This 177-nucleotide RNA was probed chemically with DMS and 2A3.

RNA sequence: GGGAACGACUCGAGUAGAGUCGAAAAUUGCUGAUGGAAUCGCUGCCGCACUGCUUGAAGCAAAUCCCCGCCGAGCCGGAGGCCGGACCUGAUCCGGCAGCAAUCUCGCACUUGCACAAAUCCAUAUGGUAGUUGUAGUAUUCGUACUACAACUACCAAAAGAAACAACAACAACAAC
Reactivity to DMS in 0.01 (KOAc 150mM, MgCl2 10mM, bicine 150mM(pH8.5), 24C), signal-to-noise 2, nucleotides 027 to 126: u020u000g030c010u000g000a120u000g000g000a080a070u010c080g000c030u000g000c010c040g000c050a100c100u010g020c040u000u000g000a090a110g000c070a050a080a130u050c030c020c000c100g020c000c050g000a020g030c030c030g000g010a180g010g010c000c000g000g000a080c060c140u030g010a100u010c060c020g040g000c010a060g000c040a040a070u020c070u000c100g000c040a080c040u000u030g020c000a040c110a040a070a030u000c030c050a070u020a110u000
Reactivity to 2A3 in 0.01 (KOAc 150mM, MgCl2 10mM, bicine 150mM(pH8.5), 24C), signal-to-noise 5, nucleotides 027 to 126: u080u040g000c010u050g010a080u070g020g070a070a070u110c050g010c030u040g010c030c020g020c020a060c050u090g030c010u040u100g070a080a000g020c010a040a010a070u050c000c020c000c000g000c000c020g020a030g020c020c010g060g010a030g050g020c010c020g010g010a030c000c070u100g030a160u020c010c000g050g000c000a000g000c020a020a050u020c020u000c070g000c040a020c010u020u080g000c030a010c050a060a060a060u060c040c020a090u100a110u180
The data come from the RNA Mapping Database (RMDB), libraries RFM100 and RFMREP.